[RMDB]
RNA sequence: GGGAACGACUCGAGUAGAGUCGAAAACAGGUUGCAAUUCUUGAAGAGCAAAUGGAAAACGGCGCACGAAGCGCAGCCAUUCUUGCGGCACAACUCAGAGCUGGAGAUGGCGCAACUGACGCGCAAAAGGCCAAGAUUGCUGAGCUGACUGGUCGCCCAUGCAAUAAUGCUUCGGCAUUAUUGCAUGAAAAGAAACAACAACAACAAC
Reactivity to 2A3 in 0.01 (KOAc 150mM, MgCl2 10mM, bicine 150mM(pH8.5), 24C), signal-to-noise 5, nucleotides 027 to 156: c040a010g060g040u030u020g010c020a040a050u040u050c020u040u090g080a110a040g030a020g100c060a030a100a110u160g050g040a060a070a040a080c090g040g000c040g020c040a030c110g130a080a010g000c020g000c050a020g000c000c010a040u140u110c050u040u080g120c030g040g020c040a020c030a180a120c050u060c080a030g020a030g170c060u080g040g000a020g010a060u060g060g000c000g010c020a030a060c070u140g070a070c060g000c010g000c000a040a040a060a070g060g000c020c010a010a020g030a110u000u050g010c010u050g030a030g020c020u020g040a060c030u050g050g030u090c030g060c010c010
Reactivity to DMS in 0.01 (KOAc 150mM, MgCl2 10mM, bicine 150mM(pH8.5), 24C), signal-to-noise 3, nucleotides 027 to 156: c030a070g020g010u000u010g000c020a100a110u020u000c040u000u000g040a110a120g030a180g060c060a050a080a130u030g010g010a060a050a130a090c080g000g030c020g040c040a070c080g030a200a160g010c010g020c000a150g010c010c030a090u000u000c020u020u010g020c030g000g080c010a270c050a060a070c080u000c060a100g010a120g000c050u010g000g000a090g010a060u010g000g000c010g000c040a050a120c080u000g020a150c060g030c030g010c030a070a040a050a100g020g020c020c010a040a130g010a140u000u000g040c000u010g010a060g010c030u010g020a160c060u000g020g010u000c000g010c010c030
Conditions: 150 mM KOAc, 10 mM MgCl2 and 150 mM bicine (pH 8.5), 24 C.
The record gives the reactivity of an RNA of 207 nucleotides to 2A3 and DMS.
2A3 adducts were read by reverse transcription with SuperScript II with manganese.
Values cover nucleotides 27 to 156.
It was measured as part of the RMDB library OK3TST.